Conditions: 150 mM KOAc, 10 mM MgCl2 and 150 mM bicine (pH 8.5), 24 C. Chemical mapping of a 207-nucleotide RNA with 2A3 and DMS. 2A3 adducts were read by reverse transcription with SuperScript II with manganese. For DMS, 3,204 sequencing reads were counted. For 2A3, 3,197 sequencing reads were counted. Reactivities are given for positions 27 through 156. DMS adducts were read by reverse transcription with MarathonRT.
RNA sequence: GGGAACGACUCGAGUAGAGUCGAAAACACAGGAUCGUGUGGAAGUCCUGCUCGGGGCGGAAGCAUUAAAACCAUUCGAGCUAGGCAAUGCGUGGCGUGUCUCUCCGCAGCGUGUUGGCGAAUGUAACAAGCUGCCUCUCGUUCGCGAGAGGCAGAAGACUUGAACAUACUUCGGUAUGUUCAAGUCAAAAGAAACAACAACAACAAC
Reactivity to 2A3 in 0.01 (KOAc 150mM, MgCl2 10mM, bicine 150mM(pH8.5), 24C), signal-to-noise 4, nucleotides 027 to 156: c050a010c010a030g210g110a280u230c100g010u020g020u030g040g020a040a020g030u020c020c010u030g040c050u040c030g000g010g010g010c030g020g050a040a000g030c030a040u130u210a040a070a030a060c030c010a010u030u010c020g020a030g100c070u110a060g100g050c010a000a030u030g000c020g020u030g050g020c010g030u060g040u090c060u040c000u010c100c010g000c010a030g010c010g010u040g030u020u030g050g020c020g020a060a020u050g020u090a090a080c060a100a020g040c000u000g000c010c000u000c010u010c000g030u050u020c130g010c020g110a000g010a000g000g010c000a000g000a000a000
Reactivity to DMS in 0.01 (KOAc 150mM, MgCl2 10mM, bicine 150mM(pH8.5), 24C), signal-to-noise 2, nucleotides 027 to 156: c030a120c050a120g000g020a090u000c100g020u010g040u010g020g030a210a090g000u000c000c010u000g000c040u000c080g000g000g020g020c110g060g000a130a170g020c120a150u020u010a040a090a110a230c050c010a080u000u010c020g010a110g040c110u030a120g030g030c040a070a020u000g000c000g020u000g050g060c040g000u000g020u000c080u000c050u000c130c000g030c040a060g000c010g030u000g000u000u000g010g040c030g000a040a050u010g020u000a050a130c070a050a120g000c010u000g000c020c000u010c000u010c010g020u000u010c300g030c000g010a050g010a010g020g000c000a000g000a010a090